[RMDB]
Annotation
Conditions: 150 mM KOAc, 10 mM MgCl2 and 150 mM bicine (pH 8.5), 24 C. An RNA of 177 nucleotides, treated with DMS and 2A3 and read out base by base. Values cover nucleotides 27 to 126. It was measured as part of the RMDB library OK2TST. DMS adducts were read by reverse transcription with MarathonRT. For 2A3 the reverse transcriptase was SuperScript II with manganese.
RNA sequence: GGGAACGACUCGAGUAGAGUCGAAAAAGACUCAUCAAGGGGCUUCCAGUCCUCUAACCCAGAGAACGGACCCACCACGUCUAGUCCAAAGUCUUUCAAUCGCGGUGGUCAUAGGGGUAGCCGAGGCCCCGUCAUAUAGUUUCGACUAUAUGACGGGAAAAGAAACAACAACAACAAC
Reactivity to DMS in 0.01 (KOAc 150mM, MgCl2 10mM, bicine 150mM(pH8.5), 24C), signal-to-noise 4, nucleotides 027 to 126: a050g000a050c020u000c220a120u020c130a090a110g000g000g010g010c060u010u000c030c030a230g040u000c000c000u000c000u000a060a110c080c050c060a130g000a100g000a070a080c070g010g000a230c120c010c010a060c030c040a040c010g010u010c130u010a080g000u000c070c050a080a060a120g000u000c030u000u000u000c080a110a060u010c040g030c030g000g030u000g000g000u000c090a090u000a070g020g000g010g020u010a050g010c110c070g010a060g000g000c110
Reactivity to 2A3 in 0.01 (KOAc 150mM, MgCl2 10mM, bicine 150mM(pH8.5), 24C), signal-to-noise 3, nucleotides 027 to 126: a010g010a020c010u030c040a030u060c070a180a080g040g010g030g000c010u080u000c050c000a020g070u070c000c010u000c010u030a060a060c020c020c030a020g020a010g010a210a020c050g020g020a020c000c020c000a020c010c030a030c020g030u000c050u110a030g100u020c020c030a100a110a030g060u030c000u030u140u110c050a080a070u090c040g000c020g050g000u030g010g030u010c010a040u110a080g000g010g000g030u020a030g040c020c030g030a020g030g020c020